[RMDB]
RNA sequence: GGGAACGACUCGAGUAGAGUCGAAAAUGCCAACCCUGGCAGAACACGGGCAGCGAAGGCGCUGCCCCUGCCGGAGUUCCUGGACCUGAAGCGGGGGCCCAACUACAAAAUCAGCUCGGCAUCCUCACCAGAGUGUACUUUUCGAAGUACACUCUGGAAAAGAAACAACAACAACAAC
Reactivity to 2A3 in 0.01 (KOAc 150mM, MgCl2 10mM, bicine 150mM(pH8.5), 24C), signal-to-noise 7, nucleotides 027 to 126: u110g020c000c010a010a010c020c010c010u030g010g000c010a000g010a070a130c240a060c090g000g010g000c010a010g010c020g080a260a140g300g040c070g000c010u000g000c000c000c000c000u010g000c000c010g010g000a040g010u060u020c000c010u060g050g060a090c010c030u050g070a110a020g040c060g020g000g000g010g020c000c000c010a080a100c020u150a060c080a070a100a040a130u120c040a020g030c020u010c010g010g000c000a040u040c000c000u030c020a060
Reactivity to DMS in 0.01 (KOAc 150mM, MgCl2 10mM, bicine 150mM(pH8.5), 24C), signal-to-noise 2, nucleotides 027 to 126: u040g000c040c020a050a050c040c020c000u000g020g000c020a000g000a050a060c170a250c300g000g010g050c000a000g020c000g060a150a170g030g020c020g020c000u000g000c070c010c000c000u000g000c000c000g000g000a080g020u010u000c070c030u020g050g000a090c040c000u010g010a020a030g020c070g000g000g010g000g020c010c000c000a060a050c080u000a060c160a020a000a060a130u020c130a190g010c110u000c040g000g030c030a060u000c070c000u060c160a300
The data come from the RNA Mapping Database (RMDB), libraries RFM100 and RFMREP. An RNA of 177 nucleotides, treated with 2A3 and DMS and read out base by base. Reactivities are given for positions 27 through 126. For DMS the reverse transcriptase was MarathonRT. The reactions ran in a buffer of 150 mM KOAc, 10 mM MgCl2 and 150 mM bicine (pH 8.5), at 24 C.